[RMDB]
The record gives the reactivity of an RNA of 177 nucleotides to DMS and 2A3. For DMS, 3,566 sequencing reads were counted. 2A3 adducts were read by reverse transcription with SuperScript II with manganese. Values cover nucleotides 27 to 126.
RNA sequence: GGGAACGACUCGAGUAGAGUCGAAAAACGCAAGAGUAGGGGUUUCUUUCGGCCUCCAGCGGAUAAUAAAGAGUUGUAGGCCGGCGGAAACUACUUGCUUUUACGUAAAGUAACUCUUCGGAGUUACGAAUUGUCUUAUCUUCGGAUAAGACAAUUCAAAAGAAACAACAACAACAAC
Reactivity to DMS in 0.01 (KOAc 150mM, MgCl2 10mM, bicine 150mM(pH8.5), 24C), signal-to-noise 3, nucleotides 027 to 126: a020c000g010c020a020a010g010a010g010u000a020g010g000g000g000u000u000u000c000u010u000u000c000g010g010c000c010u000c060c010a020g000c000g000g010a110u020a090a150u010a100a100a190g010a160g000u000u000g010u000a020g000g010c000c010g010g000c040g000g000a010a010a020c000u000a060c000u000u010g010c000u000u000u000u000a020c010g000u010a080a080a180g000u000a010a000c000u000c000u000u010c210g020g010a020g000u000u000a010c000
Reactivity to 2A3 in 0.01 (KOAc 150mM, MgCl2 10mM, bicine 150mM(pH8.5), 24C), signal-to-noise 2, nucleotides 027 to 126: a010c010g000c010a000a000g000a000g000u010a000g000g000g000g000u000u000u000c000u010u020u010c010g020g000c010c010u010c040c010a010g000c010g070g080a080u060a300a040u120a080a300a040g150a020g010u010u010g000u000a000g000g000c010c000g000g000c010g010g020a050a000a000c010u110a210c000u010u000g000c000u020u000u010u020a010c000g020u030a040a000a160g000u000a000a000c000u020c000u040u070c260g080g000a000g000u000u000a000c010